[RMDB]
RNA sequence: GGGAACGACUCGAGUAGAGUCGAAAAGAUAUGGAAUAACAAGAGCCGUGUAGUCGUUGAAAUCGGAAACGAUGGAGACUACCGGCGACUCUGUUAUUCCUAAGUCAAACCCAUCUUCGGAUGGGAACAGUAAACAAUGCUUCGGCAUUGUUUACUGAAAAGAAACAACAACAACAAC
Reactivity to DMS in 0.01 (KOAc 150mM, MgCl2 10mM, bicine 150mM(pH8.5), 24C), signal-to-noise 3, nucleotides 027 to 126: g010a050u000a300u000g010g000a020a000u000a000a000c000a030a050g000a300g000c000c000g010u000g010u000a010g010u000c010g000u000u000g000a060a110a010u000c000g000g000a150a050a130c000g000a000u000g000g000a110g000a000c000u000a010c000c050g010g000c010g000a000c030u000c120u000g000u000u000a000u000u000c000c000u000a030a030g010u000c050a090a070a170c000c000c000a000u000c000u000u010c210g030g000a010u000g000g000g000a020a080
Reactivity to 2A3 in 0.01 (KOAc 150mM, MgCl2 10mM, bicine 150mM(pH8.5), 24C), signal-to-noise 2, nucleotides 027 to 126: g020a010u070a050u140g000g010a000a000u000a010a000c010a020a050g010a000g010c050c000g100u250g010u140a010g000u000c040g090u160u060g030a030a040a000u000c000g030g020a050a030a040c000g000a000u020g020g040a010g000a010c010u000a000c000c020g000g000c000g000a000c000u050c050u010g000u010u000a010u000u000c000c000u000a100a010g020u000c030a020a040a250c000c000c010a010u000c000u040u090c300g210g000a010u010g000g010g020a000a060

An RNA of 177 nucleotides, treated with DMS and 2A3 and read out base by base.